[RMDB]
RNA sequence: GGGAACGACUCGAGUAGAGUCGAAAAGGGUGUAAUCAAUACCAAUCACCGUACAUUGGCUGUAGCUUGCCAGCAGGCGCAUGAUGCGAUCGUGGGUAUCGAGAUUGCCGAGAAUAAAACCGCCUCCCCACCAUACCUAAUUCGUUAGGUAUGGUGGAAAAGAAACAACAACAACAAC
Reactivity to 2A3 in 0.01 (KOAc 150mM, MgCl2 10mM, bicine 150mM(pH8.5), 24C), signal-to-noise 6, nucleotides 027 to 126: g100g010g000u080g030u060a040a050u070c070a030a040u050a080c020c000a020a070u120c010a030c060c000g020u070a030c010a080u060u120g080g000c020u030g040u110a060g030c030u050u130g070c050c010a030g010c010a010g050g000c030g000c080a020u090g030a120u120g080c010g050a060u050c070g020u060g060g020g010u030a020u050c080g010a070g010a080u040u030g000c020c020g050a060g050a090a070u160a070a060a000a020c010c010g030c020c020u030c030c000
Reactivity to DMS in 0.01 (KOAc 150mM, MgCl2 10mM, bicine 150mM(pH8.5), 24C), signal-to-noise 6, nucleotides 027 to 126: g000g020g020u000g010u010a050a080u010c080a100a050u000a070c020c020a110a080u000c100a070c030c010g020u010a060c070a060u000u010g010g000c030u000g000u010a070g000c040u000u000g020c200c130a060g010c050a070g000g000c020g020c060a030u000g000a120u000g010c020g000a030u010c100g010u000g010g010g010u000a040u000c050g010a070g000a070u000u000g000c010c030g010a110g000a080a080u000a040a050a060a120c040c050g000c030c030u000c040c050